Conditions: 150 mM KOAc, 10 mM MgCl2 and 150 mM bicine (pH 8.5), 24 C. An RNA of 177 nucleotides, treated with DMS and 2A3 and read out base by base. For DMS, 777 sequencing reads were counted. The 2A3 profile rests on 818 reads.
[RMDB]
RNA sequence: GGGAACGACUCGAGUAGAGUCGAAAACAGAGGUGCCGGCACCGGUCGGGAAAUGGGCCAGCCAAAAUUGUUCUCGACAGCAAAUUUAGCCAAACGCCACAUGACUUCGCCAUCGAUGACGGGACACUGGUACUGGUGUAUUCGUACACCAGUACCAAAAAGAAACAACAACAACAAC
Reactivity to DMS in 0.01 (KOAc 150mM, MgCl2 10mM, bicine 150mM(pH8.5), 24C), signal-to-noise 1, nucleotides 027 to 126: c030a070g040a210g020g010u010g000c080c040g000g040c030a050c070c070g020g000u040c080g020g030g020a000a040a050u020g000g000g010c000c050a070g020c000c050a020a000a060a120u000u000g000u000u000c000u000c080g020a070c140a070g000c040a070a020a070u000u000u040a110g000c030c040a040a070a170c210g000c050c040a020c040a010u000g000a110c040u000u000c210g010c000c000a000u000c050g000a040u010g000a010c080g020g000g000a040c100a060c190
Reactivity to 2A3 in 0.01 (KOAc 150mM, MgCl2 10mM, bicine 150mM(pH8.5), 24C), signal-to-noise 1, nucleotides 027 to 126: c060a030g100a150g170g000u060g040c030c070g040g000c080a070c100c040g010g000u010c010g040g060g000a080a080a090u100g000g000g000c180c030a030g000c030c000a030a070a090a080u120u100g010u120u030c040u050c050g080a090c020a010g040c010a020a050a090u090u130u100a060g010c000c050a140a050a000c040g010c050c010a090c040a060u110g030a070c000u070u060c120g020c060c000a010u060c020g060a000u040g040a020c000g060g000g000a010c050a020c050